[RMDB]
RNA sequence: GGGAACGACUCGAGUAGAGUCGAAAACAAACUUUCGAGUUUGCUACGGCCGUAGGCUGAGUGAGACCAGGGAGCGACAACGUUCGAAAGAGCGUACUGUCGCGAAGAACUGGUCCUGAAUCUCAGCCUAAACGGAAUUUUGUUCAUUCGUGAACAAGUCUUAAAGCAACUUCGGUUGCUUUAAGACAAAAGAAACAACAACAACAAC
Reactivity to DMS in 0.01 (KOAc 150mM, MgCl2 10mM, bicine 150mM(pH8.5), 24C), signal-to-noise 1, nucleotides 027 to 156: c010a040a020a020c010u000u000u000c170g010a080g040u000u000u000g010c010u020a100c000g070g000c010c010g050u010a030g010g030c030u010g010a020g060u000g000a080g050a000c000c000a030g000g020g000a190g000c000g010a020c000a050a030c030g020u010u000c010g000a150a090a230g000a020g000c000g010u020a040c160u010g020u000c020g040c000g010a050a100g010a160a180c000u010g000g020u000c000c010u010g000a180a110u010c000u000c000a000g010c000c010u000a030a050a070c000g010g000a050a070u000u000u000u010g020u010u000c020a180u000u010c270g040u000g010a020a070c010a090a130
Reactivity to 2A3 in 0.01 (KOAc 150mM, MgCl2 10mM, bicine 150mM(pH8.5), 24C), signal-to-noise 4, nucleotides 027 to 156: c010a000a020a000c010u100u100u250c290g120a030g010u010u030u020g030c080u110a070c050g080g010c000c000g000u020a010g010g000c000u000g000a000g020u090g050a160g000a030c000c000a000g000g010g010a050g010c010g020a000c000a090a060c000g000u000u000c000g030a050a050a020g000a000g000c000g000u070a240c120u030g010u020c000g000c000g000a050a000g010a010a010c000u000g020g010u000c010c000u060g070a060a070u040c000u000c000a000g000c010c010u000a000a000a000c000g000g050a030a030u160u120u060u060g010u000u000c010a020u000u060c180g160u050g020a010a010c010a030a050